Overview
An RNA of 177 nucleotides, treated with DMS and 2A3 and read out base by base. For 2A3, 2,250 sequencing reads were counted. High DMS reactivity at an A or C suggests that its Watson-Crick edge is free. Reactivities are given for positions 27 through 126. High 2A3 reactivity points to a flexible backbone, as in loops and unpaired stretches. DMS adducts were read by reverse transcription with MarathonRT.

RNA sequence: GGGAACGACUCGAGUAGAGUCGAAAAAGGUCGUCGCAAGAUUGGCAAUUUAGGUGAAAAACGGACAAAACCAACUCCGGAUCAAUAUGCUGAGAUCGUCCACAACUUUCGAGUUGGAUCGCAGUUAUCAACUUAACUACUUCGGUAGUUAAGUUGAAAAAGAAACAACAACAACAAC
Reactivity to DMS in 0.01 (KOAc 150mM, MgCl2 10mM, bicine 150mM(pH8.5), 24C), signal-to-noise 4, nucleotides 027 to 126: a080g010g010u000c030g020u000c050g000c220a100a080g010a060u010u010g020g020c040a110a060u000u000u000a080g000g000u000g000a040a050a040a090a100c090g000g010a070c110a050a030a130a110c070c060a070a070c140u000c020c010g000g010a070u010c110a060a100u000a080u010g020c000u000g010a040g020a000u000c030g010u020c060c120a300c070a020a010c030u000u000u000c140g000a070g010u000u010g000g000a040u000c020g000c050a050g000u000u000a100
Reactivity to 2A3 in 0.01 (KOAc 150mM, MgCl2 10mM, bicine 150mM(pH8.5), 24C), signal-to-noise 2, nucleotides 027 to 126: a010g030g000u010c020g000u000c010g000c040a060a000g030a090u100u180g060g000c010a030a010u070u110u120a100g040g040u090g080a120a000a020a020a030c040g030g010a030c030a030a140a020a010c030c020a050a080c040u000c000c020g030g000a040u080c010a050a040u140a080u300g020c010u010g000a010g000a040u040c020g010u080c070c010a010c010a020a010c000u110u100u100c160g110a040g000u020u000g040g010a010u020c040g000c020a010g010u050u070a050